[RMDB]
The record gives the reactivity of an RNA of 177 nucleotides to DMS. In probing experiments dimethyl sulfate is read out at A N1 and C N3, which are open when not base-paired.
RNA sequence: GGGAACGACUCGAGUAGAGUCGAAAAGAUAUUAACGCGCGUGCUGUGUCUAACGCGAUUUACCCAGUUAUUUUCGACUUUACUCGAGUCGUUAUAGCGUGAUAUGACACAGUUAUCCGCGAACGAAAUGGAUUAGUUGAUUCGUCAACUAAUCCAUAAAAGAAACAACAACAACAAC
Reactivity to DMS in 0.01 (KOAc 150mM, MgCl2 10mM, bicine 150mM(pH8.5), 24C), signal-to-noise 3, nucleotides 027 to 126: g000a160u000a080u010u010a060a070c040g000c010g020c040g010u000g010c010u010g000u000g000u000c020u010a090a020c000g020c000g000a150u010u020u000a110c100c050c120a160g010u010u000a070u000u000u000u000c000g000a010c000u000u000u010a000c030u000c000g000a000g000u000c000g000u010u000a020u000a070g010c010g020u010g020a030u000a010u010g000a030c030a020c030a030g010u010u000a050u000c030c000g000c000g010a110a130c150g000a050a060